[RMDB]
RNA sequence: GGGAACGACUCGAGUAGAGUCGAAAAGAGCUGUCGUGAUCGAGUUUAGAGAUUCGGUUUUCUGUUUCUCGUUUUUACUUGUAUAACACAUACUUGUAUUGUGUAGCUCGAGAAACGGUAGCUCAAAGGGAUAAGUUAAGUUCGCUUAACUUAUCCCAAAAGAAACAACAACAACAAC
Reactivity to DMS in 0.01 (KOAc 150mM, MgCl2 10mM, bicine 150mM(pH8.5), 24C), signal-to-noise 2, nucleotides 027 to 126: g000a010g020c030u000g000u020c000g020u000g000a300u000c000g020a020g030u000u020u050a050g020a030g000a000u000u000c000g010g020u000u010u050u040c040u020g020u000u010u000c000u010c000g000u000u030u000u000u020a010c030u000u020g010u000a000u010a100a100c300a150c130a040u010a000c000u000u000g000u000a010u000u010g000u010g040u030a050g000c000u000c010g020a010g010a120a080a010c000g000g000u010a000g000c000u000c010a040a030a080
Reactivity to 2A3 in 0.01 (KOAc 150mM, MgCl2 10mM, bicine 150mM(pH8.5), 24C), signal-to-noise 9, nucleotides 027 to 126: g000a000g000c000u000g010u010c000g000u020g020a050u000c000g010a000g020u070u120u220a060g030a000g010a010u000u010c030g050g110u150u070u160u170c060u070g020u000u010u000c010u000c010g060u180u070u010u040u030a020c010u010u010g040u020a010u060a170a120c150a020c040a140u000a010c000u010u010g060u030a020u030u080g090u030g120u230a020g000c000u000c000g000a010g010a000a060a000c000g010g000u000a000g000c000u000c000a010a000a000